[RMDB]
Structure probing data (2A3) for a 207-nucleotide construct. Values cover nucleotides 27 to 156. The RNA was probed in 150 mM KOAc, 10 mM MgCl2 and 150 mM bicine (pH 8.5) at 24 C. For 2A3, 529 sequencing reads were counted.
RNA sequence: GGGAACGACUCGAGUAGAGUCGAAAACUACCUGUGGCAAUCACGCGCUGAUUCUUCUCUACCAACCACAAAGACAUUGGCACCCUAUAUCUUGUAUUUGGUGCCUGAGCCGGAAUAGUUGGAACCGCCCUCAGCCUACUUAUUCGAGCUGAAUUAACUAUCGUGCCUUUUUCGAAAGGCACGAUAGAAAAGAAACAACAACAACAAC
Reactivity to 2A3 in 0.01 (KOAc 150mM, MgCl2 10mM, bicine 150mM(pH8.5), 24C), signal-to-noise 1, nucleotides 027 to 156: c060u100a060c000c000u060g040u080g100g060c020a030a020u100c000a050c080g110c010g000c090u040g020a090u080u000c000u100u000c030u010c020u160a050c020c020a130a020c010c010a070c030a040a190a050g030a040c040a160u110u160g000g000c000a000c010c000c010u030a020u020a040u220c190u120u300g070u050a020u050u060u050g050g000u000g000c000c000u020g000a000g040c000c000g080g020a090a120u100a090g050u050u020g040g000a020a010c110c010g000c040c080c050u020c000a030g040c000c000u040a100c050u230u110a060u150u140c010g040a010g050c020u010g010a000a080u140u140a110a040